[RMDB]
RNA sequence: GGGAACGACUCGAGUAGAGUCGAAAACCGUAGGAGGUCCUACCCACCUCGCGAUGUUCGUUUGACGUAGGAUUCGAAAGAGUCCUACCGAGAACAUCGGCGAGAGGGACCUCCUAAACGGAAAAUCAAUGCAAUACGUUCGCGUAUUGCAUUGAAAGUCUAUUAUCUUCUUCGGAAGAUAAUAGACAAAAGAAACAACAACAACAAC
Reactivity to 2A3 in 0.01 (KOAc 150mM, MgCl2 10mM, bicine 150mM(pH8.5), 24C), signal-to-noise 4, nucleotides 027 to 156: c010c000g010u010a010g000g000a000g010g020u000c010c000u050a200c080c070c020a070c010c000u000c000g020c010g000a000u000g000u000u010c080g040u060u190u280g070a080c030g000u000a000g000g010a000u000u000c010g050a060a080a060g000a010g010u000c000c000u010a000c000c000g010a020g000a010a000c000a000u010c040g300g020c000g000a000g000a010g000g000g000a000c010c000u020c000c000u000a000a000a000c020g040g050a080a040a010a090u060c000a000a000u020g000c000a000a000u000a010c000g030u040u080c270g000c000g160u010a000u000u000g000c000a000u000u000g000a000a000a000
Reactivity to DMS in 0.01 (KOAc 150mM, MgCl2 10mM, bicine 150mM(pH8.5), 24C), signal-to-noise 2, nucleotides 027 to 156: c010c000g010u000a030g030g030a000g010g040u000c020c030u040a060c020c050c040a300c060c000u000c020g030c010g000a000u000g050u000u000c000g040u000u000u000g020a090c190g030u000a000g000g000a010u000u020c000g010a140a090a300g010a030g040u000c000c000u020a000c000c000g020a150g000a030a030c000a000u000c010g020g050c020g000a010g000a250g020g000g000a010c000c000u000c000c000u000a010a050a020c030g000g000a080a050a120a110u000c000a040a000u000g000c000a020a010u000a020c000g030u000u000c300g000c040g000u000a000u000u000g010c010a000u000u000g000a030a030a140
This 207-nucleotide RNA was probed chemically with 2A3 and DMS. 2A3 adducts were read by reverse transcription with SuperScript II with manganese.